[RMDB]
RNA sequence: GGGAACGACUCGAGUAGAGUCGAAAAGUUAUGCUCUCGCUGCCUAAUGGCGGUGCGUGAAACCCACUCUAAAGUCCUUAGGGUUAGCCCCUUAAGGCGGGGUUCGGAGGCACCUGGCAACAGAAGCUGAAACUGUGCACAUUCGUGUGCACAGUAAGGCUGUAUAAAUAUUCGUAUUUAUACAGCCAAAAGAAACAACAACAACAAC
Reactivity to DMS in 0.01 (KOAc 150mM, MgCl2 10mM, bicine 150mM(pH8.5), 24C), signal-to-noise 2, nucleotides 027 to 156: g010u000u090a050u000g030c040u000c040u030c100g010c010u000g000c010c000u000a070a170u010g030g010c040g020g030u000g030c040g060u000g020a070a020a090c020c010c020a170c120u010c100u000a070a080a150g010u010c040c040u000u000a050g020g000g060u000u000a170g020c170c200c010c010u010u000a060a010g030g100c000g020g000g010g030u000u000c030g020g020a270g000g010c030a030c010c010u000g040g040c030a070a080c040a070g000a030a100g010c020u010g020a190a070a080c000u000g000u000g020c000a010c020a140u000u000c300g000u000g020u000g000c000a000c000a000g010u000a020a110
Reactivity to 2A3 in 0.01 (KOAc 150mM, MgCl2 10mM, bicine 150mM(pH8.5), 24C), signal-to-noise 5, nucleotides 027 to 156: g050u100u080a090u190g020c020u030c020u030c040g000c020u010g000c030c040u300a300a160u270g020g000c050g000g020u030g000c030g010u020g050a080a050a030c000c040c000a050c020u150c090u170a130a080a300g300u020c000c000u000u010a000g000g020g000u010u080a030g010c030c010c000c000u000u050a000a000g000g000c010g000g000g000g000u000u210c090g070g010a030g050g010c000a000c000c010u040g290g010c000a010a000c000a020g020a010a000g000c010u020g020a080a020a010c000u000g000u000g010c000a000c000a010u040u110c120g090u030g000u000g020c010a000c000a000g000u000a010a050